About this RNA: The record gives the reactivity of an RNA of 177 nucleotides to DMS and 2A3. Conditions: 150 mM KOAc, 10 mM MgCl2 and 150 mM bicine (pH 8.5), 24 C. The DMS profile rests on 47,710 reads. DMS adducts were read by reverse transcription with MarathonRT.
RNA sequence: GGGAACGACUCGAGUAGAGUCGAAAACCCGUUUUGUUCGCAAAACGGGACUCAUCUUUGCUUCGCAGCAUAGCAGGUGUUGGCUGGACUGCUGGCUUAUCCUUGGAGGCAGUUUCGACUGCCUCAAGAUACACUAAUUAUUCGUAAUUAGUGUAUCAAAAGAAACAACAACAACAAC
Reactivity to DMS in 0.01 (KOAc 150mM, MgCl2 10mM, bicine 150mM(pH8.5), 24C), signal-to-noise 9, nucleotides 027 to 126: c000c000c000g010u000u000u000u000g010u000u010c190g020c010a010a010a010a010c000g010g000g000a100c090u010c090a100u000c080u000u010u000g010c020u000u000c300g010c070a040g000c090a090u000a040g010c050a070g010g010u000g010u010u010g010g010c020u000g000g010a140c050u000g010c020u000g000g000c030u000u000a060u010c040c030u000u010g020g010a020g000g010c000a010g000u000u010u010c150g010a040c000u000g000c000c000u000c000a010a030
Reactivity to 2A3 in 0.01 (KOAc 150mM, MgCl2 10mM, bicine 150mM(pH8.5), 24C), signal-to-noise 9, nucleotides 027 to 126: c010c000c000g000u010u010u010u010g020u010u050c190g000c100a000a000a000a000c000g000g000g040a060c020u030c060a190u050c080u060u130u100g020c010u040u070c090g030c050a030g000c010a070u070a080g020c040a050g040g120u110g090u300u190g150g010c010u020g020g050a100c020u030g000c000u010g030g000c000u040u090a120u100c020c030u020u120g150g000a000g000g000c000a000g000u010u030u110c150g060a030c000u000g000c000c000u000c000a000a000